[RMDB]
RNA sequence: GGGAACGACUCGAGUAGAGUCGAAAAUGGAAGGGUCUGACCCCCUUUGCGACGCACCUCACGUUGAAAUAUGCCCUUCGCAUGGGCACGAACGCCUUCUACCAGAGCCUUCUCAGAGACCAGAGCGGUUAUGCUGACGAUUCGUCGUCAGCAUAACAAAAGAAACAACAACAACAAC
Reactivity to 2A3 in 0.01 (KOAc 150mM, MgCl2 10mM, bicine 150mM(pH8.5), 24C), signal-to-noise 1, nucleotides 027 to 126: u110g040g030a040a040g120g030g140u090c140u160g300a300c000c000c080c000c010u060u060u160g080c020g010a020c030g050c040a020c000c020u070c020a060c100g060u020u070g080a000a020a110u210a040u050g020c000c030c000u020u020c010g000c050a050u040g000g020g000c010a000c040g060a050a010c030g050c010c070u080u000c060u070a090c040c000a030g000a020g060c000c000u000u000c060u000c020a010g010a020g000a040c000c040a020g010a020g220c060g040
Reactivity to DMS in 0.01 (KOAc 150mM, MgCl2 10mM, bicine 150mM(pH8.5), 24C), signal-to-noise 3, nucleotides 027 to 126: u000g020g000a030a060g020g000g010u010c020u000g010a300c060c020c010c040c050u030u000u000g010c030g030a070c090g020c060a070c080c080u000c090a060c050g010u000u000g000a080a080a140u010a100u000g030c010c000c010u000u000c180g000c180a140u000g010g000g000c030a050c090g000a050a040c080g000c020c020u000u000c050u020a070c090c030a060g000a070g020c030c010u000u000c010u020c040a090g010a110g010a120c040c000a070g000a200g020c160g000